This 177-nucleotide RNA was probed chemically with 2A3 and DMS. For DMS, 6,905 sequencing reads were counted. Source: RMDB library OK1LIB, as collected in RNAgym. For 2A3, 7,920 sequencing reads were counted. The reactions ran in a buffer of 150 mM KOAc, 10 mM MgCl2 and 150 mM bicine (pH 8.5), at 24 C. For 2A3 the reverse transcriptase was SuperScript II with manganese.
RNA sequence: GGGAACGACUCGAGUAGAGUCGAAAAUGGUCUUACAAUAACGUCCGUCUCCGUCAGUCCAAAGAACUGAAAGAGCAAAUCUACAGGAUGGUCGGUUCGACGAAUGGUGUGACAAACUGUUCGGGACACCCUUUGGUUAGUUCGCUAACCAAAGGGUAAAAGAAACAACAACAACAAC
Reactivity to 2A3 in 0.01 (KOAc 150mM, MgCl2 10mM, bicine 150mM(pH8.5), 24C), signal-to-noise 7, nucleotides 027 to 126: u150g040g010u030c030u090u140a100c080a080a160u160a190a020c030g010u000c000c000g060u010c020u010c020c020g040u020c010a010g020u000c030c040a140a100a080g060a090a040c010u030g020a090a060a020g060a020g030c070a080a120a100u040c040u090a100c030a040g110g000a050u070g030g050u030c030g030g010u040u040c050g070a070c000g020a040a000u010g010g000u010g040u080g080a030c050a000a110a000c040u030g020u020u020c000g020g000g020a020c020
Reactivity to DMS in 0.01 (KOAc 150mM, MgCl2 10mM, bicine 150mM(pH8.5), 24C), signal-to-noise 4, nucleotides 027 to 126: u040g000g030u000c030u010u020a100c160a070a110u030a110a080c140g010u000c010c050g010u020c010u000c020c260g030u020c030a020g020u010c020c060a100a190a100g010a080a050c010u010g010a010a040a110g010a070g000c170a060a070a060u010c040u000a080c140a050g040g000a060u000g010g010u000c010g000g020u010u010c020g050a140c010g000a030a010u000g000g010u000g000u010g010a100c190a100a100a020c010u000g000u000u010c010g000g000g000a070c120